[RMDB]
RNA sequence: GGGAACGACUCGAGUAGAGUCGAAAAUGGUGCCCGUUCGCGGGCACCACCUCGUGGUUAGGGCCACGUUAAAUAGUUGCUUAAGCCCUAAGCGUUGAUAAUGAUGCGCGAAAUUCGUUUCGCGCAAAUGACGUCAAGAUUUCGAUCUUGACGUCAUAAAAGAAACAACAACAACAAC
Reactivity to DMS in 0.01 (KOAc 150mM, MgCl2 10mM, bicine 150mM(pH8.5), 24C), signal-to-noise 2, nucleotides 027 to 126: u010g030g050u000g020c010c000c000g040u000u010c180g030c030g010g020g040c000a000c000c010a010c010c000u000c000g020u000g000g010u000u000a050g000g000g000c000c010a010c020g000u010u020a000a020a040u010a050g000u000u010g020c150u000u010a130a170g010c000c000c000u000a020a060g000c100g020u010u000g000a100u010a080a090u010g000a150u020g000c000g000c000g000a000a020a060u000u020c160g010u000u000u000c000g020c000g010c000a010a010
An RNA of 177 nucleotides, treated with DMS and read out base by base. The reactions ran in a buffer of 150 mM KOAc, 10 mM MgCl2 and 150 mM bicine (pH 8.5), at 24 C. For DMS, 2,390 sequencing reads were counted.